[RMDB]
RNA sequence: GGGAACGACUCGAGUAGAGUCGAAAACGACCGGUGCGUUGCACGUAGCGUCGCGACAGAACUGCGUUUGCCGAUACGGGCGGGGGGCCGAAUUGUAAGCGCGUCACCUCUUGGGAGUCAUCGGCGGAAAUUCACUGCGGUUCGCCGCAGUGAAUUUAAAAGAAACAACAACAACAAC
Reactivity to DMS in 0.01 (KOAc 150mM, MgCl2 10mM, bicine 150mM(pH8.5), 24C), signal-to-noise 1, nucleotides 027 to 126: c070g080a130c000c020g000g000u010g000c140g000u000u010g000c000a010c030g000u040a060g030c100g000u000c060g000c080g000a030c010a060g000a060a060c110u000g000c040g030u000u030u090g060c000c000g010a120u030a110c070g030g000g000c060g000g000g000g010g010g020c060c040g120a010a060u060u080g020u050a110a120g000c060g000c130g010u000c020a110c010c070u000c020u000u000g030g080g010a170g000u020c050a110u000c010g010g000c020g040g000
Reactivity to 2A3 in 0.01 (KOAc 150mM, MgCl2 10mM, bicine 150mM(pH8.5), 24C), signal-to-noise 1, nucleotides 027 to 126: c000g030a060c010c020g000g020u000g000c080g160u080u140g070c020a000c000g000u000a070g030c070g060u080c020g000c000g020a050c020a060g080a050a120c050u050g030c070g020u010u120u120g110c010c000g050a120u100a070c070g000g000g000c000g030g030g000g000g060g050c000c000g000a000a000u050u140g060u160a120a070g020c000g000c000g080u080c050a150c120c000u030c100u110u100g050g010g040a160g000u010c020a030u000c020g010g000c000g010g000

Source: RMDB library OK1LIB, as collected in RNAgym. Chemical mapping of a 177-nucleotide RNA with DMS and 2A3. Conditions: 150 mM KOAc, 10 mM MgCl2 and 150 mM bicine (pH 8.5), 24 C. For DMS, 1,627 sequencing reads were counted. DMS adducts were read by reverse transcription with MarathonRT.